An RNA of 177 nucleotides, treated with DMS and read out base by base. Values are in units of 0.01, from 0 to 300, in steps of 10. Values cover nucleotides 27 to 126. For DMS the reverse transcriptase was MarathonRT.
RNA sequence: GGGAACGACUCGAGUAGAGUCGAAAAAGGGUCUUAGUCUGUCAUCCAUGCUGGAAUAGUGCAGUUUCGCGAUCUUGGCUCAUUGCAACCUCUACCUCCUGGGCUCAAGCGAUCCUCUCAUGUCACAGUGGAAAAUUUAGUUCGCUAAAUUUUCCACAAAAGAAACAACAACAACAAC
Reactivity to DMS in 0.01 (KOAc 150mM, MgCl2 10mM, bicine 150mM(pH8.5), 24C), signal-to-noise 3, nucleotides 027 to 126: a090g000g000g000u000c020u010u010a070g010u000c050u010g000u000c050a060u010c030c040a080u000g000c070u000g010g000a110a070u000a090g030u000g000c050a060g010u000u010u020c090g010c070g010a060u000c040u000u010g020g000c010u000c080a060u000u010g000c110a080a100c090c010u000c050u000a090c060c020u000c020c020u000g000g000g020c030u010c060a040a060g010c070g000a060u000c030c020u010c050u000c030a080u010g000u000c050a090c150a160